Structure probing data (DMS) for a 177-nucleotide construct. Conditions: 150 mM KOAc, 10 mM MgCl2 and 150 mM bicine (pH 8.5), 24 C. For DMS the reverse transcriptase was MarathonRT.
[RMDB]
RNA sequence: GGGAACGACUCGAGUAGAGUCGAAAAAAAAGAUAUGGAUGUGUCGAGUCGAACAGCCUUUGAUCUAAUUUCGGAAACGAAAUUAGGGAGGCUGUGAUCGACUAAGACAGCACAUCCUAAGUCAAAACUAGUAAAAUACGUUCGCGUAUUUUACUAGAAAAGAAACAACAACAACAAC
Reactivity to DMS in 0.01 (KOAc 150mM, MgCl2 10mM, bicine 150mM(pH8.5), 24C), signal-to-noise 4, nucleotides 027 to 126: a050a100a090a120g010a050u010a300u020g000g000a010u000g020u000g010u000c080g000a060g000u000c000g010a050a040c000a010g010c000c010u000u000u020g020a050u010c010u000a000a010u000u000u010c000g000g000a110a090a140c000g000a020a000a000u000u000a000g000g000g000a010g010g030c000u000g000u000g010a060u010c020g010a010c000u020a080a060g010a140c300a140g000c030a020c010a010u000c010c000u000a030a110g010u010c020a090a070a100a170